[RMDB]
RNA sequence: GGGAACGACUCGAGUAGAGUCGAAAAGGGCACCGGGACCGCCAGGGUGAGGAGGGACUCUGCGUUCUGCAAAGCUAGCGGUUCCCACUCCACCUCCCACUAUCUCAGCGAUGGGCACGCGAGCGCCAGCCCGGGCGACCGCGGGGGAAGAAGCGGAGACUGCACCAUUAUUCGUAAUGGUGCAGUCAAAAGAAACAACAACAACAAC
Reactivity to 2A3 in 0.01 (KOAc 150mM, MgCl2 10mM, bicine 150mM(pH8.5), 24C), signal-to-noise 1, nucleotides 027 to 156: g010g030g020c050a040c110c080g000g050g020a030c000c010g010c060c060a050g030g010g050u060g090a150g040g040a100g020g000g000a060c040u010c030u110g090c070g090u170u010c020u010g020c050a050a040a080g030c010u090a050g000c050g050g000u010u070c000c010c000a050c030u110c050c000a110c020c050u000c010c020c000a060c030u210a120u130c080u050c120a110g000c060g100a100u040g070g020g000c100a040c040g060c020g060a110g070c020g000c010c000a080g040c010c000c030g060g010g000c030g040a090c000c050g010c010g000g000g000g000g000a080a060g010a060a000g020c070g030g000a020
Source: RMDB library OK3TST, as collected in RNAgym. An RNA of 207 nucleotides, treated with 2A3 and read out base by base. Conditions: 150 mM KOAc, 10 mM MgCl2 and 150 mM bicine (pH 8.5), 24 C. 2A3 adducts were read by reverse transcription with SuperScript II with manganese.